The data come from the RNA Mapping Database (RMDB), library RNAMAK.
Chemical mapping of a 207-nucleotide RNA with DMS and 2A3.
RNA sequence: GGGAACGACUCGAGUAGAGUCGAAAAGCCGCUAACGUUCGCGUUAGCGGCAAAAACCUUUGUGAGGAUCAAGCUUGGAUUUAUACGAACCCAUUGGGUUCAGUAUUGUCAGCUUGGCCUCACUCUGGUAAAAUGUAUUGAUCUUCGGAUCAAUACAGUGAGAUCAUAAGUUCGCUUAUGAUCUCACAAAAGAAACAACAACAACAAC
Reactivity to DMS in 0.01 (KOAc 150mM, MgCl2 10mM, bicine 150mM(pH8.5), 24C), signal-to-noise 1, nucleotides 027 to 156: g070c030c000g030c040u010a000a000c030g000u000u010c270g050c050g060u000u000a010g040c000g060g020c000a000a010a060a180a030c000c010u020u000u000g000u000g000a070g000g010a130u000c010a000a000g000c000u010u010g040g010a030u000u000u000a030u000a000c010g000a000a020c010c000c000a300u000u000g070g040g000u000u020c000a010g080u010a020u000u000g010u000c030a070g040c000u000u000g010g020c050c010u010c000a000c000u000c010u010g020g010u000a070a090a100a180u000g000u010a010u000u020g000a010u010c020u000u000c300g080g010a010u000c000a010a010u000a000c010a050
Reactivity to 2A3 in 0.01 (KOAc 150mM, MgCl2 10mM, bicine 150mM(pH8.5), 24C), signal-to-noise 4, nucleotides 027 to 156: g020c000c000g080c000u000a000a000c000g060u080u110c280g000c000g120u000u050a010g000c040g010g050c000a010a000a020a000a000c000c000u010u000u020g010u000g000a040g020g080a240u100c010a000a000g000c010u130u220g140g010a080u170u300u130a020u080a010c030g000a010a010c020c020c100a270u220u300g000g020g000u010u010c020a010g000u000a010u000u030g030u010c000a000g000c000u000u000g010g000c000c000u000c000a000c000u000c000u000g000g000u050a090a090a010a060u070g000u000a010u000u000g000a010u000c000u040u090c300g100g000a000u000c000a000a000u000a010c000a010

High DMS reactivity at an A or C suggests that its Watson-Crick edge is free.
The reactions ran in a buffer of 150 mM KOAc, 10 mM MgCl2 and 150 mM bicine (pH 8.5), at 24 C.